[RMDB]
RNA sequence: GGGAACGACUCGAGUAGAGUCGAAAACGGGGUUGGAUCGGACUCUCAUAGGCUCUCCAACCCAACUCCUACUCAAUACGUCCUCGUCGUACAGAACGGUAACAUGUUUUCCGAACAUCCGCGCUUGCAAACCUGCCAAAGUUCGCUUUGGCAGGAAGCCUUGGAAAUACUUCGGUAUUUCCAAGGCAAAAGAAACAACAACAACAAC
Reactivity to 2A3 in 0.01 (KOAc 150mM, MgCl2 10mM, bicine 150mM(pH8.5), 24C), signal-to-noise 1, nucleotides 027 to 156: c080g020g020g000g000u020u000g030g000a020u080c130g000g040a080c040u050c010u040c160a200u160a210g020g000c020u010c000u000c040c000a000a020c010c000c010a000a000c000u030c000c000u000a020c010u010c050a110a110u130a170c010g070u030c000c020u050c080g070u000c020g000u040a060c020a130g060a140a010c000g010g030u040a040a000c030a160u070g060u010u000u030u130c090c040g030a060a010c020a070u000c050c040g040c000g040c110u050u100g010c060a050a110a150c000c000u000g000c010c000a010a000a000g020u030u060c020g070c130u000u000u000g000g000c000a000g000g010a000a000